[RMDB]
RNA sequence: GGGAACGACUCGAGUAGAGUCGAAAAACGAGGACUACGGUCCUCGAAAGUCAUAACUGCUAUUCUCCAGGAAUAGUGAUUGUGAUUAGCGAUGCGGGUGUGUUGGCGCACAUCCGCACCGCGCUAACUGUACACUGGGAUUCGUCCCAGUGUACAGAAAAGAAACAACAACAACAAC
Reactivity to 2A3 in 0.01 (KOAc 150mM, MgCl2 10mM, bicine 150mM(pH8.5), 24C), signal-to-noise 4, nucleotides 027 to 126: a000c010g000a000g000g000a000c010u040a020c250g110g000u000c000c000u000c000g000a010a000a000g010u000c000a010u010a030a010c010u030g010c000u010a010u010u020c030u100c120c140a150g090g030a000a000u000a000g010u010g040a040u000u020g000u000g010a020u110u060a030g000c000g010a010u000g010c010g000g000g000u000g010u020g020u040u180g230g040c160g000c060a000c000a000u000c000c000g000c000a000c000c000g000c010g000c010u050a090a080
Reactivity to DMS in 0.01 (KOAc 150mM, MgCl2 10mM, bicine 150mM(pH8.5), 24C), signal-to-noise 4, nucleotides 027 to 126: a110c000g010a000g010g020a000c000u000a080c190g040g000u000c000c000u000c000g010a020a050a030g020u000c000a000u000a010a000c020u000g000c000u000a000u010u000c000u000c190c300a150g010g000a020a010u000a010g000u000g000a030u000u000g010u000g000a020u010u010a060g020c010g000a020u000g000c000g000g000g010u010g010u000g020u000u010g040g010c300g000c010a010c000a000u000c010c000g020c000a000c000c010g020c020g010c160u020a050a180

Overview: Source: RMDB libraries RFM100 and RFMREP, as collected in RNAgym. The record gives the reactivity of an RNA of 177 nucleotides to 2A3 and DMS. 2A3 adducts were read by reverse transcription with SuperScript II with manganese. Values are in units of 0.01, from 0 to 300, in steps of 10. DMS adducts were read by reverse transcription with MarathonRT. Values cover nucleotides 27 to 126.